The record gives the reactivity of an RNA of 177 nucleotides to DMS and 2A3.
[RMDB]
RNA sequence: GGGAACGACUCGAGUAGAGUCGAAAAGAUAUGGACGCUUCCGGGAGGCGCUCGGAAACGAGAACUACGCUCGGACGGGCGUCCUAAGUCAAACCCCCAGAGCUAUGUUCGCAUAGCUCUGGGGGAAGCCUGAAUUAACGUUCGCGUUAAUUCAGGCAAAAGAAACAACAACAACAAC
Reactivity to DMS in 0.01 (KOAc 150mM, MgCl2 10mM, bicine 150mM(pH8.5), 24C), signal-to-noise 1, nucleotides 027 to 126: g000a080u030a300u000g010g000a020c010g030c000u000u010c000c010g030g040g000a060g010g000c300g040c000u000c000g020g010a060a060a150c010g000a030g010a050a060c080u010a180c100g010c000u000c010g000g000a030c300g010g000g000c010g010u010c000c000u000a010a120g010u010c020a050a080a140c000c000c000c000c000a000g000a020g020c010u000a000u000g030u000u010c150g010c000a040u010a000g010c000u000c000u040g000g000g000g000g000a000a000
Reactivity to 2A3 in 0.01 (KOAc 150mM, MgCl2 10mM, bicine 150mM(pH8.5), 24C), signal-to-noise 1, nucleotides 027 to 126: g010a020u000a040u170g020g000a000c010g000c000u090u020c000c010g020g070g050a060g050g020c050g030c030u000c020g090g000a070a100a040c000g000a010g000a070a080c150u230a070c200g040c050u070c030g050g050a090c190g140g050g070c020g030u010c010c000u010a050a010g020u010c050a110a030a300c020c000c000c000c010a000g000a010g000c010u020a000u000g060u140u170c300g000c170a000u000a020g030c000u000c000u000g000g000g000g000g030a000a020

The RNA was probed in 150 mM KOAc, 10 mM MgCl2 and 150 mM bicine (pH 8.5) at 24 C.
The data come from the RNA Mapping Database (RMDB), library TTRDEL.
For DMS, 658 sequencing reads were counted.
Values cover nucleotides 27 to 126.
For DMS the reverse transcriptase was MarathonRT.